[RMDB]
RNA sequence: GGGAACGACUCGAGUAGAGUCGAAAAAAAGAUAUGGACAUGGAACUACGACGAGAUGAGGUUUCGACGAUCUUAAAUCGGAAACGAUUUAAGGGAGAAACCUGAGUCGCCAUGUCCUAAGUCAAAACUCUUGUUAUAAGUUCGCUUAUAACAAGAGAAAAGAAACAACAACAACAAC
Reactivity to DMS in 0.01 (KOAc 150mM, MgCl2 10mM, bicine 150mM(pH8.5), 24C), signal-to-noise 5, nucleotides 027 to 126: a060a060a100g000a040u000a300u010g000g010a010c010a020u000g000g010a160a050c160u030a300c020g010a040c010g020a230g020a240u020g010a050g000g010u000u000u000c010g010a080c260g010a040u010c000u000u000a000a010a000u000c000g000g000a120a080a190c000g020a000u000u000u000a000a000g000g000g000a030g010a000a000a010c000c000u000g000a100g000u000c010g010c000c010a000u000g000u000c000c000u000a010a070g010u000c040a130a070a120a110
Reactivity to 2A3 in 0.01 (KOAc 150mM, MgCl2 10mM, bicine 150mM(pH8.5), 24C), signal-to-noise 4, nucleotides 027 to 126: a000a010a010g060a050u100a050u110g010g000a000c010a000u010g030g000a170a120c160u300a090c300g020a000c020g050a040g100a300u300g300a130g050g050u000u000u010c150g100a300c010g000a070u010c000u000u000a010a000a000u000c000g030g020a120a030a040c000g010a010u010u010u010a010a000g010g000g000a030g000a000a000a010c000c000u020g020a050g020u010c010g000c010c000a000u000g000u000c000c000u000a020a010g020u020c010a040a040a030a160

Source: RMDB library TTRDES, as collected in RNAgym. An RNA of 177 nucleotides, treated with DMS and 2A3 and read out base by base. Reactivities are given for positions 27 through 126. The reactions ran in a buffer of 150 mM KOAc, 10 mM MgCl2 and 150 mM bicine (pH 8.5), at 24 C. 2A3 adducts were read by reverse transcription with SuperScript II with manganese.